Source: RMDB library OK3TST, as collected in RNAgym. Chemical mapping of a 207-nucleotide RNA with 2A3 and DMS. Values cover nucleotides 27 to 156. For 2A3, 4,488 sequencing reads were counted. For DMS, 6,611 sequencing reads were counted. The reactions ran in a buffer of 150 mM KOAc, 10 mM MgCl2 and 150 mM bicine (pH 8.5), at 24 C.
[RMDB]
RNA sequence: GGGAACGACUCGAGUAGAGUCGAAAAAGACUGGGCGCAGCUGAAAGACGAUGUCGAAGCUGAAAUGCUGAAAACCGCGCCUAUCCGCCCGACCCGCUACAACGUGAUCAUCGCCGUCCCGUACGUCUACGUGUUCACCACCAGCGCCAAGACCGCCGACCAUAGGUAUAUUCGUAUACCUAUGGUCAAAAGAAACAACAACAACAAC
Reactivity to 2A3 in 0.01 (KOAc 150mM, MgCl2 10mM, bicine 150mM(pH8.5), 24C), signal-to-noise 5, nucleotides 027 to 156: a000g060a020c100u070g000g020g020c010g010c020a050g010c040u070g080a070a050a030g070a040c100g090a090u230g020u070c050g030a030a010g010c020u030g040a040a050a060u140g000c010u010g030a050a020a050a000c040c040g010c000g000c000c000u000a070u030c030c030g020c010c000c000g040a060c000c000c010g000c030u060a030c050a140a040c040g040u040g040a050u040c030a020u080c050g000c050c020g040u030c020c010c020g050u080a060c030g000u000c030u030a040c050g060u040g040u040u080c030a030c050c000a030c010c020a020g030c000g010c030c010a030a010g070a040c080c010g050c130c070
Reactivity to DMS in 0.01 (KOAc 150mM, MgCl2 10mM, bicine 150mM(pH8.5), 24C), signal-to-noise 3, nucleotides 027 to 156: a070g010a120c050u010g040g010g000c000g060c020a090g000c040u010g000a150a130a110g020a060c030g000a140u010g020u000c060g010a210a100g020c020u010g010a100a070a110u000g010c020u000g000a100a080a090a050c020c020g020c030g030c020c010u060a050u000c050c040g010c040c040c020g030a090c020c010c010g030c080u000a090c060a070a060c050g010u000g020a090u010c060a050u000c000g030c020c030g000u000c000c010c030g020u000a070c050g050u000c010u000a050c050g030u010g000u000u000c040a060c030c040a080c040c010a060g000c030g030c000c020a050a130g000a120c050c030g010c080c050